[RMDB]
RNA sequence: GGGAACGACUCGAGUAGAGUCGAAAAUUCGGUGCAAUAUGUGCCGGCCGAUGUCAUCGAGGAGAUGCGCGGCAGCCAUCAACUCGGCGUGUUCCUGCGCAUCGACACGGAUCCCGCGCUUCACAUGUGGUUCGGUGUCAACGACGUUCCGAUCGGCGUACCGUGAUGUUUUCGAACAUCACGGUACAAAAGAAACAACAACAACAAC
Reactivity to DMS in 0.01 (KOAc 150mM, MgCl2 10mM, bicine 150mM(pH8.5), 24C), signal-to-noise 1, nucleotides 027 to 156: u000u010c030g070g040u000g000c000a160a150u000a110u000g000u000g000c000c000g030g080c220c000g000a070u010g030u020c030a110u020c030g000a110g010g040a300g020a060u000g000c060g030c010g000g040c020a070g040c000c010a100u010c060a130a030c240u000c020g110g060c040g010u000g100u010u000c020c040u010g050c000g020c000a040u020c000g020a030c010a090c030g000g000a080u000c070c010c020g040c000g040c140u000u000c080a300c060a050u030g020u090g000g070u000u000c010g000g030u030g020u000c030a140a070c040g000a060c000g000u000u000c010c020g010a080u000c000g000g020c080
Reactivity to 2A3 in 0.01 (KOAc 150mM, MgCl2 10mM, bicine 150mM(pH8.5), 24C), signal-to-noise 4, nucleotides 027 to 156: u070u040c010g010g000u000g010c040a140a170u120a210u300g020u010g010c000c000g000g000c000c000g020a060u040g090u190c010a020u050c050g020a040g030g050a110g000a020u000g000c010g010c010g020g000c000a000g000c000c010a080u200c080a110a160c110u050c170g010g020c110g060u090g000u080u230c020c030u090g000c010g000c000a030u010c050g010a000c000a000c000g080g000a020u060c020c010c020g000c010g010c030u290u300c150a140c040a200u180g030u050g050g010u000u000c030g100g020u010g010u020c030a050a050c090g090a030c010g000u040u040c020c000g050a100u060c040g020g010c000
An RNA of 207 nucleotides, treated with DMS and 2A3 and read out base by base. For DMS, 2,005 sequencing reads were counted. The reactions ran in a buffer of 150 mM KOAc, 10 mM MgCl2 and 150 mM bicine (pH 8.5), at 24 C. 2A3 adducts were read by reverse transcription with SuperScript II with manganese. Source: RMDB library OK3TST, as collected in RNAgym.